Annotation
An RNA of 177 nucleotides, treated with DMS and read out base by base.

[RMDB]
RNA sequence: GGGAACGACUCGAGUAGAGUCGAAAAUAGCAGCGCACGGAUGCCGGCCACCGCGGCGUCGCGAUAGCGUGCCGGGUUGUCCGACAGCAGCUUGUGGGUCAGCAGCCGUCCGUCCGGCCGGCGCGCCAUGAUAGUUCCCCUUCGGGGGAACUAUCAUAAAAGAAACAACAACAACAAC
Reactivity to DMS in 0.01 (KOAc 150mM, MgCl2 10mM, bicine 150mM(pH8.5), 24C), signal-to-noise 1, nucleotides 027 to 126: u010a090g030c020a120g000c030g010c080a100c030g030g000a070u000g040c080c010g020g010c030c050a080c040c140g010c030g000g010c040g010u000c030g000c010g010a120u010a040g050c020g000u000g000c020c000g000g010g020u010u000g010u000c010c010g030a060c040a170g010c050a090g020c050u030u010g020u010g010g030g000u000c080a100g020c010a070g000c030c030g010u000c040c070g030u000c150c100g000g010c030c020g000g040c020g020c060g030c040c110